[RMDB]
An RNA of 177 nucleotides, treated with DMS and read out base by base. Source: RMDB library TTRINS, as collected in RNAgym. High DMS reactivity at an A or C suggests that its Watson-Crick edge is free. Conditions: 150 mM KOAc, 10 mM MgCl2 and 150 mM bicine (pH 8.5), 24 C.
RNA sequence: GGGAACGACUCGAGUAGAGUCGAAAAGAUAUGGACUGCACGUAAGAGCCUUGGACCUAUGACCCAGCCCACGUCGGAAACGACGUGUGAGCUGCAUAGCUAGGCUCUUACGUGCAGUCCUAAGUCACCAACUAAUACUCUUCGGAGUAUUAGUUGGAAAAGAAACAACAACAACAAC
Reactivity to DMS in 0.01 (KOAc 150mM, MgCl2 10mM, bicine 150mM(pH8.5), 24C), signal-to-noise 3, nucleotides 027 to 126: g000a060u010a300u000g010g000a010c010u000g000c000a000c010g020u000a010a010g000a000g020c000c010u000u010g020g010a200c300c010u000a000u000g000a300c300c300c090a010g000c010c000c000a010c010g010u000c010g020g000a120a100a180c010g010a010c000g020u000g000u000g000a150g010c000u000g020c020a010u000a000g000c030u000a020g000g000c010u000c000u010u000a000c000g020u000g000c000a000g000u000c000c000u010a000a080g000u010c050a300